RNA sequence: GGGAACGACUCGAGUAGAGUCGAAAAGGCUAAGAAGUAAGUGGGCGGUGGGAAGCUAGAAGCCGUGGUGUAGACCUACUUUGAGAGGUUGGGCUGUUCAGACAGGGAGAAAGUUCACAGUUUGAGGAGGUAGAUAGGUCAAAGGAAGAGGGUUUGCAAUACGAAAGGAAUUCGUUCCUUUCGUAUUAAAAGAAACAACAACAACAAC
Reactivity to 2A3 in 0.01 (KOAc 150mM, MgCl2 10mM, bicine 150mM(pH8.5), 24C), signal-to-noise 1, nucleotides 027 to 156: g070g000c050u090a070a050g020a060a000g070u160a110a140g040u120g050g030g010c080g080g040u130g100g000g000a000a000g040c040u010a050g050a080a010g060c080c030g040u000g000g030u010g060u020a020g060a040c000c000u010a050c060u060u240u250g210a180g000a020g000g030u010u040g000g000g000c020u010g010u050u030c000a010g000a150c010a010g040g000g020a060g100a040a030a030g040u020u060c050a010c070a080g010u060u110u090g090a090g030g000a000g040g030u010a030g030a060u100a060g120g000u040c030a050a020a060g040g000a030a000g070a000g010g000g010u010u070u070g020c010

An RNA of 207 nucleotides, treated with 2A3 and read out base by base. For 2A3 the reverse transcriptase was SuperScript II with manganese. Values cover nucleotides 27 to 156. The RNA was probed in 150 mM KOAc, 10 mM MgCl2 and 150 mM bicine (pH 8.5) at 24 C.